This 177-nucleotide RNA was probed chemically with DMS. Conditions: 150 mM KOAc, 10 mM MgCl2 and 150 mM bicine (pH 8.5), 24 C. The data come from the RNA Mapping Database (RMDB), library TTRINS.
[RMDB]
RNA sequence: GGGAACGACUCGAGUAGAGUCGAAAAGAUAUGGAUAGCCUUGAAGCUCGCGAUAUGGACUGGAGUACCCGGUCGGAAACGACCGGUACUAUGAAGGUCCAUAUCGCGAGUGGAGCUAUCCUAAGUCCUUUCUGUUAGGGUUCGCCCUAACAGAAAGAAAAGAAACAACAACAACAAC
Reactivity to DMS in 0.01 (KOAc 150mM, MgCl2 10mM, bicine 150mM(pH8.5), 24C), signal-to-noise 1, nucleotides 027 to 126: g000a130u000a230u000g000g010a000u000a010g080c030c300u000u000g010a200a300g040c000u000c010g000c000g010a020u000a000u000g000g010a000c000u010g010g010a170g010u000a060c250c030c020g020g000u000c010g030g000a150a110a220c010g000a000c000c020g000g010u000a000c300u000a150u000g000a290a290g000g000u000c000c020a010u000a030u010c010g010c000g000a000g010u000g030g000a060g000c010u010a010u000c000c020u000a000a060g000u000c010